[RMDB]
RNA sequence: GGGAACGACUCGAGUAGAGUCGAAAACGUAACCUUAAAAUCCGUGAAGCCGUCCGUGUCUGAUUAAGGUACUGAUUGUGAUGACGAUAGUAAGUCAGCAGGUGGAAGCACUUGUACGGUGGUUACUGAUAUACUUAGACUUCGGUCUAAGUAUAUCAAAAGAAACAACAACAACAAC
Reactivity to 2A3 in 0.01 (KOAc 150mM, MgCl2 10mM, bicine 150mM(pH8.5), 24C), signal-to-noise 7, nucleotides 027 to 126: c020g000u000a000a000c000c000u010u010a000a000a000a060u050c000c000g010u000g010a010a000g010c000c010g010u000c010c000g010u010g020u000c010u020g190a300u300u160a100a020g010g000u010a010c000u010g010a010u010u020g010u020g020a010u010g010a000c010g010a020u040a080g080u030a140a040g000u000c000a000g000c010a000g000g020u010g010g030a070a030g140c010a000c000u010u000g000u010a000c000g000g000u000g000g000u000u000a010c000u010
Reactivity to DMS in 0.01 (KOAc 150mM, MgCl2 10mM, bicine 150mM(pH8.5), 24C), signal-to-noise 9, nucleotides 027 to 126: c120g010u000a000a010c000c000u000u000a010a000a270a050u010c000c010g000u000g000a130a300g000c010c020g000u000c000c100g010u000g010u000c000u000g000a170u010u020a070a020g010g010u000a010c010u000g000a020u000u000g000u000g000a050u000g010a020c010g010a140u010a140g000u010a090a170g000u000c000a020g000c000a010g010g020u000g000g000a180a110g000c010a010c010u000u000g010u000a010c000g000g010u000g000g010u000u000a000c020u000